[RMDB]
This 207-nucleotide RNA was probed chemically with DMS and 2A3. The data come from the RNA Mapping Database (RMDB), library RFM130. The 2A3 profile rests on 3,764 reads. The reactions ran in a buffer of 150 mM KOAc, 10 mM MgCl2 and 150 mM bicine (pH 8.5), at 24 C. For 2A3 the reverse transcriptase was SuperScript II with manganese.
RNA sequence: GGGAACGACUCGAGUAGAGUCGAAAACAGCGCCGAUGAUGAGUUCACAAAUGUACUAGGUUGAAUUCUGAUCGAAGAACCUCUCUUGGUUCGAACGAUGGCCACCUGUGUUCCUCUCGAUCUGAGGCGCUGAAAACAGGGUCCUUCGGGACCCUGAGGAUACGUACAACUUCGGUUGUACGUAUCCAAAAGAAACAACAACAACAAC
Reactivity to DMS in 0.01 (KOAc 150mM, MgCl2 10mM, bicine 150mM(pH8.5), 24C), signal-to-noise 2, nucleotides 027 to 156: c000a060g030c010g030c020c010g070a300u010g000a140u000g010a110g010u010u010c020a050c080a030a070a060u000g000u000a070c080u010a110g000g060u010u000g010a070a090u000u000c060u000g020a130u000c130g000a100a220g000a030a000c020c010u000c250u000c120u000u010g020g020u000u000c020g000a060a110c090g010a220u010g000g000c080c010a040c030c020u000g040u000g000u000u000c070c020u000c050u000c010g010a080u000c040u000g010a300g030g000c000g020c060u020g000a020a030a070a170c010a010g000g010g030u000c010c000u000u010c280g020g020g030a010c010c000c000u010g010a040
Reactivity to 2A3 in 0.01 (KOAc 150mM, MgCl2 10mM, bicine 150mM(pH8.5), 24C), signal-to-noise 5, nucleotides 027 to 156: c000a000g010c010g000c000c010g020a040u050g010a010u020g000a020g010u160u130c080a030c050a120a160a120u250g050u150a090c050u080a050g010g030u060u050g040a100a130u200u040c060u130g090a020u010c020g010a030a030g000a040a000c010c010u120c000u040c110u190u190g000g000u060u020c020g000a140a010c010g010a020u040g030g000c030c010a010c010c010u080g030u020g010u150u030c050c020u030c020u020c020g150a040u000c000u010g040a010g030g000c000g000c000u000g000a010a000a000a010c010a000g000g010g000u000c000c020u040u110c150g060g010g000a000c000c000c010u000g000a000